The record gives the reactivity of an RNA of 177 nucleotides to DMS.
For DMS the reverse transcriptase was MarathonRT.
The DMS profile rests on 1,529 reads.
Conditions: 150 mM KOAc, 10 mM MgCl2 and 150 mM bicine (pH 8.5), 24 C.
Reactivities are given for positions 27 through 126.

[RMDB]
RNA sequence: GGGAACGACUCGAGUAGAGUCGAAAAAGUUUGUCCACACGUUCUCGGUGGUUGUGAUGUAAAAAGCGAUGCCUUGAUUUUGGUGCAGGUAUACGAUGCUUCGUUGUCCGAAAUCGCCUCGGCGAUGGCCGGCAGAUAGAUUCGUCUAUCUGCCGGCAAAAGAAACAACAACAACAAC
Reactivity to DMS in 0.01 (KOAc 150mM, MgCl2 10mM, bicine 150mM(pH8.5), 24C), signal-to-noise 1, nucleotides 027 to 126: a070g000u010u020u000g010u010c010c000a070c140a210c030g010u000u000c000u000c020g000g020u010g010g000u000u000g030u000g010a090u000g010u000a020a050a070a060a090g030c060g000a090u000g010c030c010u020u000g010a120u010u000u000u010g010g020u000g000c070a040g000g000u010a070u000a080c120g020a100u010g010c090u000u000c010g050u000u000g000u020c000c000g000a050a110a050u000c030g000c040c030u000c250g020g000c040g020a020u000g000